[RMDB]
RNA sequence: GGGAACGACUCGAGUAGAGUCGAAAAGCGAAAAUCGGACGGUGGCUGCAAGUCGCAUCGCAAAACCGCGGCAACUGGAGUUAGCGAGAGGAGGCUGGGUUUUGGCUUCCUUAAGCAAUCGGUCACCAUAAGAGGAUUCGCUUCGGCGAAUCCUCAACGUAACGAGUAGGUUCGCCUACUCGUUACGAAAAGAAACAACAACAACAAC
Reactivity to 2A3 in 0.01 (KOAc 150mM, MgCl2 10mM, bicine 150mM(pH8.5), 24C), signal-to-noise 2, nucleotides 027 to 156: g050c040g030a010a030a030a110u250c110g030g070a070c120g020g000u020g000g000c010u040g020c080a090a020g010u010c040g000c010a040u100c040g000c090a010a120a040a010c080c090g000c010g020g000c010a030a020c070u090g040g030a070g070u130u130a030g060c000g000a000g000a010g060g000a000g010g000c000u100g140g110g050u170u110u130u270g030g000c000u000u000c000c010u000u000a030a010g000c000a010a030u040c000g000g000u010c010a000c000c000a000u040a030a010g010a000g000g000a000u010u000c000g000c000u010u000c070g080g010c000g000a000a000u000c000c010u010c010a000a020